[RMDB]
RNA sequence: GGGAACGACUCGAGUAGAGUCGAAAAGUUGGGGGGGAGAUGGGCUUACCUACGGGAAUCCCUGGGUCCCCCUGAUGUCCAGUCCCUCCCCCGUCCGAGAGAAGGGAGACUCCGGAACUCCUGCCAUAAACACAGCAGUUCGCUGCUGUGAAAAGAAACAACAACAACAAC
Reactivity to 2A3 in 0.01 (KOAc 150mM, MgCl2 10mM, bicine 150mM(pH8.5), 24C), signal-to-noise 9, nucleotides 027 to 129: g090u090u070g010g000g000g000g000g010g000a090g020a060u060g010g000g000c030u050u110a240c000c010u020a060c140g040g000g010a040a080u110c010c010c000u020g090g020g060u050c010c000c000c000c010u000g000a010u040g010u000c020c010a010g090u010c020c000c000u020c000c000c010c000c000g020u000c020c020g050a070g000a000g000a080a090g050g000g000a030g020a020c020u000c010c010g010g010a010a020c020u030c010c010u010g050c030c010a140u210a060a080a010
Reactivity to DMS in 0.01 (KOAc 150mM, MgCl2 10mM, bicine 150mM(pH8.5), 24C), signal-to-noise 8, nucleotides 027 to 129: g000u000u000g000g010g010g010g020g010g000a060g010a160u020g010g010g030c090u000u010a080c010c010u020a070c230g060g000g000a100a040u030c020c010c010u000g000g010g070u040c020c010c010c010c030u000g020a020u010g020u060c040c050a060g000u030c030c020c010u020c000c000c000c010c010g020u030c050c030g000a140g010a020g000a070a060g000g040g020a070g020a110c060u030c050c000g000g030a080a080c010u030c050c000u020g000c100c070a060u050a030a100a160
Notes
The record gives the reactivity of an RNA of 170 nucleotides to 2A3 and DMS. 2A3 adducts were read by reverse transcription with SuperScript II with manganese. It was measured as part of the RMDB library 15KLIB.